[RMDB]
RNA sequence: GGGAACGACUCGAGUAGAGUCGAAAAGAUAUGGAUCGCCCAAGGGAGCUAAUAUUCGGAAACGAAUAUACUAGCGAGGAUCUUGGCGAUCCUAAGUCAAAGUAGAUCGACUUCGGUCGAUCUACAAUCAGACCAAUCUCUUCGGAGAUUGGUCUGAAAAAGAAACAACAACAACAAC
Reactivity to DMS in 0.01 (KOAc 150mM, MgCl2 10mM, bicine 150mM(pH8.5), 24C), signal-to-noise 1, nucleotides 027 to 126: g010a000u000a010u000g000g000a000u000c000g050c130c050c280a000a030g030g000g010a030g010c000u010a070a010u000a000u000u000c010g000g010a010a030a000c000g000a000a000u000a000u010a200c300u010a000g000c000g040a050g010g010a010u000c000u010u000g000g030c050g020a000u000c010c000u000a010a020g000u010c020a140a080a100g000u000a010g010a020u000c010g010a000c000u000u040c250g010g000u000c010g000a010u000c000u000a000c000a100a160